[RMDB]
RNA sequence: GGGAACGACUCGAGUAGAGUCGAAAAUAAUGCCACUUCGGUGGCAUUAGCAGGUACGAAAGCCGUAUCAAGUACAAAAUCCCAAACAACAAGAUAGGCAAAUAAUGCAUAGCUUCGGCUAUGCAAAGAUCUAGUAUCUCUUCGGAGAUACUAGAUCAAAAGAAACAACAACAACAAC
Reactivity to 2A3 in 0.01 (KOAc 150mM, MgCl2 10mM, bicine 150mM(pH8.5), 24C), signal-to-noise 3, nucleotides 027 to 126: u030a000a000u010g000c000c010a000c010u020u070c250g100g000u000g050g000c000a000u000u000a000g000c010a020g030g160u030a000c000g070a290a080a020g030c010c000g000u010a000u050c040a080a020g010u010a040c020a020a130a010a060u020c010c010c000a030a060a020c070a010a010c020a050a000g030a070u050a040g060g000c040a040a050a020u230a060a060u060g000c000a000u010a010g000c000u040u040c200g080g000c000u000a000u000g000c000a000a010a010
Reactivity to DMS in 0.01 (KOAc 150mM, MgCl2 10mM, bicine 150mM(pH8.5), 24C), signal-to-noise 4, nucleotides 027 to 126: u000a000a020u000g000c000c000a010c000u000u020c140g070g030u000g000g010c000a010u010u000a010g000c200a110g010g020u000a010c010g000a100a160a140g000c010c010g010u010a030u000c020a060a130g010u000a030c040a100a050a130a110u000c000c010c010a050a100a110c140a040a050c100a180a090g010a020u000a050g010g000c060a160a090a060u030a050a100u000g010c000a000u000a000g000c020u000u000c220g000g000c010u000a000u000g000c000a000a010a060

Conditions: 150 mM KOAc, 10 mM MgCl2 and 150 mM bicine (pH 8.5), 24 C. An RNA of 177 nucleotides, treated with 2A3 and DMS and read out base by base. For DMS the reverse transcriptase was MarathonRT. For DMS, 3,538 sequencing reads were counted. For 2A3, 8,004 sequencing reads were counted. The data come from the RNA Mapping Database (RMDB), library M2PK50.